Notes:
The data come from the RNA Mapping Database (RMDB), library M2RFOK. The record gives the reactivity of an RNA of 207 nucleotides to 2A3. 2A3 is a SHAPE reagent: it acylates the 2'-hydroxyl of flexible nucleotides of all four kinds. The reactions ran in a buffer of 150 mM KOAc, 10 mM MgCl2 and 150 mM bicine (pH 8.5), at 24 C.
RNA sequence: GGGAACGACUCGAGUAGAGUCGAAAACAUUCUUGAAAAAGUGAUGUAGAUUUAUAGCCCAUAACUUUUUUGAAUUACAUCGACGAUACGGCGUCGAAAGACAAAUAAAUAGACCGUAUGAAAGAAAAAAACAACAGUAGCUUCGGCUACUGUUGAACAAUCACCAUAUCUUCGGAUAUGGUGAUUGAAAAGAAACAACAACAACAAC
Reactivity to 2A3 in 0.01 (KOAc 150mM, MgCl2 10mM, bicine 150mM(pH8.5), 24C), signal-to-noise 1, nucleotides 027 to 156: c000a000u020u020c030u020u050g000a040a030a020a020a020g000u010g020a010u010g010u120a100g100a260u090u300u140a080u130a040g040c000c000c000a040u110a100a030c080u080u000u030u060u060u200g120a130a040u150u180a160c080a130u030c000g000a010c000g000a000u000a000c000g000g000c000g000u010c010g020a000a000a000g070a010c060a000a040a020u100a040a040a020u040a060g130a060c010c000g000u000a000u010g050a020a070a090g050a050a050a070a000a000a040a050c010a000a000c000a000g000u000a000g010c010u060u030c300g060g000c010u010a000c000u010g020u000u000g000a000a000